[RMDB]
RNA sequence: GGGAACGACUCGAGUAGAGUCGAAAAGAAGUGUUCGCACUUCAGAUUUCCUAAGUCACUCACGUUUGACGAAGGAGCAAGACGGAUGUCGGAAACGACAUACGUUGAUGACCUCCUUCCGAGUGAGUGAUAUGGAUGUGUUAGCGUUCGCGCUAAACAAUGAACGUCGAUUCGUCGACGUUCAUUGAAAAGAAACAACAACAACAAC
Reactivity to DMS in 0.01 (KOAc 150mM, MgCl2 10mM, bicine 150mM(pH8.5), 24C), signal-to-noise 4, nucleotides 027 to 156: g000a020a040g030u000g020u000u000c300g070c010a040c010u000u000c000a100g010a180u010u000u010c000c000u000a100a230g020u000c010a020c000u000c020a040c000g020u000u000u010g000a170c120g000a040a010g040g010a030g020c020a080a200g010a010c000g000g000a010u000g010u000c010g010g010a130a130a300c010g010a020c000a010u010a000c000g020u000u000g000a160u010g000a070c300c000u000c000c010u000u010c000c000g000a150g000u000g000a030g020u000g010a020u010a080u000g010g000a100u010g010u000g000u000u000a030g010c010g030u000u010c270g020c040g010c010u000a010a060a260
Reactivity to 2A3 in 0.01 (KOAc 150mM, MgCl2 10mM, bicine 150mM(pH8.5), 24C), signal-to-noise 4, nucleotides 027 to 156: g010a020a000g010u020g040u110u240c270g040c080a000c000u000u020c010a040g060a180u140u110u050c000c000u030a170a020g010u000c000a000c000u000c000a000c040g140u080u150u260g170a140c110g000a010a000g010g000a010g000c040a100a040g010a000c000g000g000a000u000g000u000c010g010g050a070a060a100c010g000a000c000a000u020a020c000g000u000u030g070a260u070g040a070c000c000u000c000c000u000u000c010c010g020a040g010u000g000a000g000u010g000a000u000a020u040g060g030a040u090g120u040g020u160u060a010g010c030g020u040u070c300g000c020g000c130u040a030a030a000
Structure probing data (DMS and 2A3) for a 207-nucleotide construct. The RNA was probed in 150 mM KOAc, 10 mM MgCl2 and 150 mM bicine (pH 8.5) at 24 C. 2A3 adducts were read by reverse transcription with SuperScript II with manganese. DMS adducts were read by reverse transcription with MarathonRT.